[RMDB]
RNA sequence: GGGAACGACUCGAGUAGAGUCGAAAAGUUUCCUAGCUUGGAAGCAUCUGCAGAAGCUUUGGCAUCCUUACAGGGUCACAUGAUGGGUGGCCGUCCGAUCAUGGUCAAGUACAAUGAACGCUGGCAACACCCGUAAUAGUUUCGACUAUUACGGGUGAAAAGAAACAACAACAACAAC
Reactivity to 2A3 in 0.01 (KOAc 150mM, MgCl2 10mM, bicine 150mM(pH8.5), 24C), signal-to-noise 3, nucleotides 027 to 126: g010u000u040u020c010c000u000a050g020c030u040u080g040g030a020a020g010c010a060u050c030u130g010c020a040g030a130a030g000c000u060u020u020g040g020c010a050u050c000c020u070u080a060c040a070g000g110g000u020c030a010c000a070u150g040a060u060g120g010g040u020g040g040c010c010g000u000c020c000g060a040u050c010a050u070g050g010u050c030a060a040g060u030a060c030a060a080u080g030a100a020c060g010c070u030g020g060c010a050a020
Reactivity to DMS in 0.01 (KOAc 150mM, MgCl2 10mM, bicine 150mM(pH8.5), 24C), signal-to-noise 6, nucleotides 027 to 126: g010u000u000u000c000c010u000a070g010c070u000u010g010g010a090a060g020c030a070u000c070u010g010c080a090g010a100a090g010c030u000u000u000g000g010c080a060u010c030c020u010u010a120c170a110g010g000g020u000c040a060c040a040u010g010a090u000g010g030g020u010g010g010c020c040g020u010c040c020g000a070u010c070a040u000g000g010u000c040a070a080g010u000a060c100a060a080u010g010a070a070c120g000c070u000g000g010c050a120a200
Record summary:
The record gives the reactivity of an RNA of 177 nucleotides to 2A3 and DMS. DMS adducts were read by reverse transcription with MarathonRT. The RNA was probed in 150 mM KOAc, 10 mM MgCl2 and 150 mM bicine (pH 8.5) at 24 C. For 2A3, 3,692 sequencing reads were counted.